Record summary: Structure probing data (2A3 and DMS) for a 177-nucleotide construct. It was measured as part of the RMDB library OK2TST. 2A3 adducts were read by reverse transcription with SuperScript II with manganese. High DMS reactivity at an A or C suggests that its Watson-Crick edge is free.

[RMDB]
RNA sequence: GGGAACGACUCGAGUAGAGUCGAAAAUCAUGCCGCUGCCGGAGGAUGAGGAUUCCUGGGCGAACCUCGACGUGAUGUUCUCGACCACGCGCGGCACGGUUCGCCGCAACAAGCUGUCGGACUUCGACGCGUAGCACUGAUUCGUCAGUGCUACGCGAAAAGAAACAACAACAACAAC
Reactivity to 2A3 in 0.01 (KOAc 150mM, MgCl2 10mM, bicine 150mM(pH8.5), 24C), signal-to-noise 2, nucleotides 027 to 126: u060c000a010u110g100c030c020g050c050u120g010c000c010g080g030a020g040g000a020u020g030a030g040g060a070u050u000c010c000u090g030g000g030c010g030a030a010c050c000u030c030g060a100c040g030u020g000a100u130g080u130u030c080u080c090g100a070c020c010a010c010g000c050g000c040g070g010c040a000c060g010g000u010u030c030g000c000c030g010c000a020a080c010a010a020g040c050u070g060u100c020g010g030a080c070u150u070c090g110a030
Reactivity to DMS in 0.01 (KOAc 150mM, MgCl2 10mM, bicine 150mM(pH8.5), 24C), signal-to-noise 2, nucleotides 027 to 126: u000c040a060u000g000c040c030g000c040u010g000c030c030g010g010a090g000g020a070u000g040a080g020g000a250u000u000c020c010u020g030g010g010c040g000a030a030c000c000u000c060g010a090c020g020u000g030a070u020g020u000u010c110u000c080g010a090c070c020a040c040g000c080g000c050g000g010c190a080c200g000g000u000u000c040g000c000c000g010c120a070a060c100a050a130g010c090u000g020u000c010g000g000a130c090u010u020c090g000a090